Structure probing data (DMS and 2A3) for a 177-nucleotide construct. The 2A3 profile rests on 2,550 reads. The DMS profile rests on 2,675 reads. For 2A3 the reverse transcriptase was SuperScript II with manganese.

RNA sequence: GGGAACGACUCGAGUAGAGUCGAAAAACAUCCUGGAAGGGGAAAGAGGAUGGGUGGAAAAGAAGGGGCGGGCCUCCCGAUCCGAGGGGCCCAACUACCAAGUUUGGAGAGCACUCCGGGCCGAAGGCUAAUGUUCCUUGUUCGCAAGGAACAUUAGAAAAGAAACAACAACAACAAC
Reactivity to DMS in 0.01 (KOAc 150mM, MgCl2 10mM, bicine 150mM(pH8.5), 24C), signal-to-noise 3, nucleotides 027 to 126: a090c160a090u000c020c020u010g010g010a090a090g000g000g010g010a050a080a070g000a080g010g010a050u000g000g010g010u000g020g000a070a060a070a080g000a060a090g000g000g010g020c220g010g010g010c000c010u000c010c000c010g000a100u010c140c060g010a080g000g000g010g010c000c000c010a020a070c080u000a140c120c100a090a140g000u010u000u000g010g010a090g020a120g010c110a060c060u000c010c020g010g010g000c050c050g010a070a050g000g000
Reactivity to 2A3 in 0.01 (KOAc 150mM, MgCl2 10mM, bicine 150mM(pH8.5), 24C), signal-to-noise 2, nucleotides 027 to 126: a000c010a040u060c010c000u000g030g070a070a060g030g010g020g010a000a160a070g020a040g050g020a070u070g030g010g030u110g070g000a090a080a040a080g060a040a060g000g020g020g020c070g000g020g000c000c010u030c020c000c010g040a050u080c090c060g000a040g020g030g000g020c000c000c000a000a010c010u040a030c000c040a040a000g010u040u070u050g030g000a050g000a020g060c030a040c110u000c030c010g000g000g000c030c010g060a070a030g070g020